[RMDB]
The data come from the RNA Mapping Database (RMDB), library OK1LIB. Structure probing data (2A3 and DMS) for a 177-nucleotide construct.

RNA sequence: GGGAACGACUCGAGUAGAGUCGAAAAGGCAGGAAUAGAAUGGGCCGAAUCUAGGGUCUCACUGCAGGCCAGAUGCUAUUUUUGUUUGGCGCACGGCCUGGUGAUUGAUCCGGCUGUGUUCUCCGCGCAAUAUUUUAAAUUUCGAUUUAAAAUAUUGAAAAGAAACAACAACAACAAC
Reactivity to 2A3 in 0.01 (KOAc 150mM, MgCl2 10mM, bicine 150mM(pH8.5), 24C), signal-to-noise 5, nucleotides 027 to 126: g060g000c040a010g020g010a040a030u060a060g060a040a030u050g020g020g010c000c000g010a020a020u040c060u050a040g060g000g020u000c010u000c000a020c010u140g020c010a000g000g000c000c010a010g010a050u040g000c000u010a070u030u070u010u040u080g170u050u060u110g020g000c010g000c000a010c020g010g000c000c010u000g000g000u020g010a090u020u100g000a010u010c000c000g000g010c010u030g010u010g000u050u000c010u000c000c010g000c010g010
Reactivity to DMS in 0.01 (KOAc 150mM, MgCl2 10mM, bicine 150mM(pH8.5), 24C), signal-to-noise 8, nucleotides 027 to 126: g010g000c010a060g000g010a090a070u040a050g000a060a060u010g010g000g010c010c010g010a070a070u030c080u010a100g020g010g010u010c060u000c000a020c030u020g030c040a020g040g010c000c000a080g000a150u030g010c010u000a010u010u020u030u030u030g010u010u020u010g010g020c040g020c090a100c060g000g010c010c000u000g010g000u000g000a030u010u020g000a010u000c000c000g000g000c020u000g010u010g010u000u000c020u000c010c020g010c140g000